[RMDB]
RNA sequence: GGGAACGACUCGAGUAGAGUCGAAAAGGGCGUCAUUUCGAUGACGCCCAUACGUCUACUCCGAUUGGCGAGGACGACGCCGACGGGCGCGAUUGCCAAUCGCACCGUCCAGAUUCGUCUGGACGAACCUCUUUUACACGUUCGCGUGUAAAAGAGGAAAAGAAACAACAACAACAAC
Reactivity to 2A3 in 0.01 (KOAc 150mM, MgCl2 10mM, bicine 150mM(pH8.5), 24C), signal-to-noise 5, nucleotides 027 to 126: g010g000g000c010g010u000c010a010u040u070u160c220g110a020u020g000a000c000g000c000c000c000a000u000a000c000g030u000c010u020a020c010u000c010c000g010a020u000u020g000g000c010g010a020g090g090a080c030g090a180c010g020c000c010g260a300c210g080g020g020c010g000c000g020a030u000u050g000c000c000a000a000u000c010g000c000a070c050c010g000u000c000c000a010g010a030u050u040c130g060u000c110u000g000g000a000c000g000a010a020
Reactivity to DMS in 0.01 (KOAc 150mM, MgCl2 10mM, bicine 150mM(pH8.5), 24C), signal-to-noise 3, nucleotides 027 to 126: g000g010g040c010g000u000c000a010u000u010u020c200g010a010u000g000a010c010g010c000c000c000a000u020a020c200g000u000c000u000a050c010u000c020c010g000a030u000u010g000g000c000g010a050g000g010a090c060g000a160c010g020c010c020g020a110c300g000g000g000c030g010c020g000a090u000u000g000c020c010a020a020u000c010g000c100a070c170c010g020u000c000c020a010g000a040u000u000c170g010u000c000u000g000g000a010c010g010a030a070
Structure probing data (2A3 and DMS) for a 177-nucleotide construct.
The data come from the RNA Mapping Database (RMDB), library M2PK50.
For DMS, 3,742 sequencing reads were counted.
For DMS the reverse transcriptase was MarathonRT.